[RMDB]
RNA sequence: GGGAACGACUCGAGUAGAGUCGAAAAACACCAAACUUCGGUUUGGUGUAAAAAGAUAUGGAGGCAUCGACUCGAUAAGUUCCCGUCGGAAACGACGGAAGAACUUUUGACGAGUAAUGCCUCCUAAGUCAAAAACUUUGCCGUUCGCGGCAAAGAAUAGAUAAGUGUUCUUCGGAACACUUAUCUAAAAAGAAACAACAACAACAAC
Reactivity to 2A3 in 0.01 (KOAc 150mM, MgCl2 10mM, bicine 150mM(pH8.5), 24C), signal-to-noise 2, nucleotides 027 to 156: a000c000a000c010c010a040a010a000c020u050u100c210g030g000u010u000u000g000g000u010g000u000a000a000a000a000a010g000a010u000a010u060g010g000a000g000g000c010a010u040c130g150a040c000u020c030g110a150u060a240a000g000u000u000c000c000c000g010u000c010g000g000a000a010a030c020g000a010c020g010g000a140a250g000a070a030c000u060u170u230u300g280a180c080g010a000g000u000a000a000u000g000c000c000u000c000c000u000a000a000g000u000c000a000a000a040a050a080c000u010u020u000g010c000c020g020u070u060c300g000c030g110g000c000a000a000a000g030a000a070